[RMDB]
Chemical mapping of a 177-nucleotide RNA with 2A3 and DMS. The RNA was probed in 150 mM KOAc, 10 mM MgCl2 and 150 mM bicine (pH 8.5) at 24 C.
RNA sequence: GGGAACGACUCGAGUAGAGUCGAAAAGGAGGCCCACGAGCGGGAGCUGGUAGCCGCGGCCAUCGAAGGCCUGUCCGGCAUCGACGGUGUGCGGAUCCUUGGCCCGACGUCGAUGCGGGACCGAGGGCCCGGUGUCAUUGUUCGCAAUGACACCGGGAAAAGAAACAACAACAACAAC
Reactivity to 2A3 in 0.01 (KOAc 150mM, MgCl2 10mM, bicine 150mM(pH8.5), 24C), signal-to-noise 1, nucleotides 027 to 126: g070g020a050g000g010c010c030c020a040c040g020a080g020c080g000g040g030a090g060c070u100g170g090u090a040g070c000c020g040c000g010g000c000c010a110u230c120g020a150a000g040g010c000c010u000g020u000c000c000g110g000c010a000u030c000g000a020c010g030g100u250g040u130g100c100g030g030a050u060c020c070u130u210g090g040c000c000c050g000a010c010g030u040c040g000a010u060g010c020g040g000g000a000c020c010g020a110g010g050g010
Reactivity to DMS in 0.01 (KOAc 150mM, MgCl2 10mM, bicine 150mM(pH8.5), 24C), signal-to-noise 2, nucleotides 027 to 126: g010g020a150g010g000c000c000c030a240c050g010a100g050c040g000g010g000a110g000c060u020g010g010u010a130g010c050c010g020c050g000g010c010c020a080u000c200g010a140a100g020g010c000c000u010g000u010c040c020g020g000c000a010u000c010g010a010c010g000g020u000g010u010g030c080g000g000a040u010c090c150u000u010g000g010c050c010c000g000a150c000g010u000c030g000a030u020g000c000g010g020g010a020c000c090g010a120g010g000g000